RNA sequence: GGGAACGACUCGAGUAGAGUCGAAAAUGAGCUUAGCGCAUGGGCCUUGUUGCCGCGCCACUGUAGGGCUUCCAGGGCGACGGCCACAUGGACGGAGGUGUGGUCGAGCGGUCGCGGUAGCAGCCGCUAGGCCGAGGGGAUUCGUCCCCUCGGCCUAAAAAGAAACAACAACAACAAC
Reactivity to 2A3 in 0.01 (KOAc 150mM, MgCl2 10mM, bicine 150mM(pH8.5), 24C), signal-to-noise 1, nucleotides 027 to 126: u080g010a050g000c010u040u080a060g020c070g000c060a070u050g010g070g060c000c010u030u040g050u030u000g010c040c010g010c010g020c030c000a090c050u090g110u200a090g080g070g040c010u100u060c060c030a030g030g050g000c020g000a180c010g010g000c010c000a010c000a000u090g060g080a020c090g080g060a060g060g000u000g020u030g030g000u010c020g030a090g030c060g000g080u180c040g000c000g000g000u050a030g060c030a010g000c000c000g050c000
Reactivity to DMS in 0.01 (KOAc 150mM, MgCl2 10mM, bicine 150mM(pH8.5), 24C), signal-to-noise 1, nucleotides 027 to 126: u000g020a100g030c030u000u000a060g010c080g000c100a140u020g010g000g000c010c050u000u010g070u000u000g030c000c020g000c010g020c010c030a100c030u000g010u000a080g020g010g000c030u000u000c070c110a040g010g000g020c000g020a250c020g000g000c010c010a000c010a020u000g020g010a160c140g000g000a070g020g050u000g010u000g010g000u010c010g020a100g000c010g010g050u000c000g050c030g000g000u010a080g020c030a080g000c050c020g020c040